[RMDB]
RNA sequence: GGGAACGACUCGAGUAGAGUCGAAAACAAGCAGUUCAGUGAGUACAUCCGGAGGAACGAGAUUGACAAAUUCUCUAUUGAAUCUCAGAUCCAGAUUAGCUGCAAAGGCUAUCAAAGAGAGUACUGCCAUCAGUUUUGGGUUCGCCCAAAACUGAUGAAAAGAAACAACAACAACAAC
Reactivity to DMS in 0.01 (KOAc 150mM, MgCl2 10mM, bicine 150mM(pH8.5), 24C), signal-to-noise 2, nucleotides 027 to 126: c090a070a200g030c130a030g040u000u000c090a090g020u000g010a130g020u000a050c020a120u020c020c020g010g050a080g000g000a070a200c160g000a020g000a020u000u000g020a120c060a020a050a160u000u010c060u010c070u000a210u000u010g000a050a020u000c010u030c040a160g000a110u000c030c000a110g000a050u000u000a020g020c010u000g000c230a050a070a110g000g000c030u010a000u000c040a040a090a060g000a020g000a200g020u000a020c050u020g010c080
Reactivity to 2A3 in 0.01 (KOAc 150mM, MgCl2 10mM, bicine 150mM(pH8.5), 24C), signal-to-noise 1, nucleotides 027 to 126: c060a000a020g100c000a010g010u120u090c010a000g010u050g280a050g020u060a000c010a200u000c000c050g040g030a030g060g000a080a050c070g000a020g000a000u030u060g040a080c070a050a190a090u100u000c130u000c000u060a140u070u190g040a010a020u000c000u000c080a040g010a030u000c020c010a010g010a060u090u110a020g010c000u060g050c070a090a030a050g030g050c020u020a010u050c110a000a130a000g150a000g030a010g050u040a020c000u050g000c030